An RNA of 177 nucleotides, treated with 2A3 and DMS and read out base by base. 2A3 adducts were read by reverse transcription with SuperScript II with manganese.
RNA sequence: GGGAACGACUCGAGUAGAGUCGAAAAGAUAUGGAUCGGGUAGGGAGUUAAUACUCGGAAACGAGUACUAACGAAGAACUAUUCCGAUCCUAAGUCAAAACAUCAUGUAGCUUCGGCUACAUGAUGAUCGUUGUCAAAUGUUCGCAUUUGACAACGAAAAAGAAACAACAACAACAAC
Reactivity to 2A3 in 0.01 (KOAc 150mM, MgCl2 10mM, bicine 150mM(pH8.5), 24C), signal-to-noise 2, nucleotides 027 to 126: g000a010u000a000u100g000g000a010u000c010g000g030g010u020a010g010g080g030a300g040u000u000a000a000u000a020c010u000c010g000g000a020a020a020c020g000a000g000u010a010c010u000a000a010c050g070a220a100g060a070a030c030u020a010u300u260c000c010g000a000u000c010c010u000a000a010g020u000c010a030a000a060a230c010a000u010c000a000u000g000u010a000g000c020u090u060c300g130g000c020u000a000c000a000u000g000a000u010g000a050
Reactivity to DMS in 0.01 (KOAc 150mM, MgCl2 10mM, bicine 150mM(pH8.5), 24C), signal-to-noise 2, nucleotides 027 to 126: g000a000u000a130u020g000g000a000u000c000g010g000g020u000a000g000g040g000a040g050u000u000a020a030u000a020c000u000c000g020g000a000a020a050c000g020a030g000u000a030c040u000a000a010c020g040a100a130g010a170a300c000u000a010u000u030c000c000g020a020u000c000c000u000a000a080g000u000c010a110a130a110a300c000a000u000c000a000u000g000u000a010g010c000u010u010c260g020g010c000u010a000c000a000u010g000a010u000g010a050
Background: High DMS reactivity at an A or C suggests that its Watson-Crick edge is free. For DMS, 2,414 sequencing reads were counted.